[RMDB]
RNA sequence: GGGAACGACUCGAGUAGAGUCGAAAAGCCGAUGAAUUGCCGAGAAGCCUGGCUCUAAAUCGUCGACGCAUCGACGACGGUCCUGCCAUGAGACCGUAACGAGGACAUGUCGCCUCGAAUGGCGUCGUAUAACAUGAGUGGUUCGCCACUCAUGUAACACUGAUCAAUUCUUCGGAAUUGAUCAGUGAAAAGAAACAACAACAACAAC
Reactivity to 2A3 in 0.01 (KOAc 150mM, MgCl2 10mM, bicine 150mM(pH8.5), 24C), signal-to-noise 5, nucleotides 027 to 156: g040c000c020g020a030u090g050a090a250u150u140g010c050c050g020a030g050a130a020g040c030c100u090g050g000c030u020c040u100a110a170a070u020c010g030u010c000g010a050c100g030c130a150u090c010g010a000c000g000a000c000g000g000u000c000c010u020g020c000c010a050u040g030a010g010a090c010c000g120u040a010a010c010g000a000g010g000a030c050a120u210g040u160c110g010c020c020u010c000g000a020a020u010g000g020c000g000u040c040g000u020a070u050a250a010c010a000u000g000a010g000u000g000g040u070u120c160g030c050c000a000c000u000c000a000u000g000u000a000a000
Reactivity to DMS in 0.01 (KOAc 150mM, MgCl2 10mM, bicine 150mM(pH8.5), 24C), signal-to-noise 2, nucleotides 027 to 156: g010c000c010g020a070u000g000a100a110u010u030g020c090c000g010a110g020a090a090g000c040c020u010g030g010c030u000c020u000a070a090a060u000c000g000u010c020g000a110c090g030c110a160u000c010g010a040c000g000a050c000g010g000u000c000c030u010g000c040c190a090u000g000a080g000a100c010c020g000u000a030a050c020g050a070g040g040a110c070a150u000g040u000c050g030c000c000u020c010g000a040a050u000g020g020c040g020u000c050g050u000a160u010a150a100c010a010u000g020a030g030u000g030g010u000u010c270g010c010c000a020c000u000c000a000u000g020u000a070a170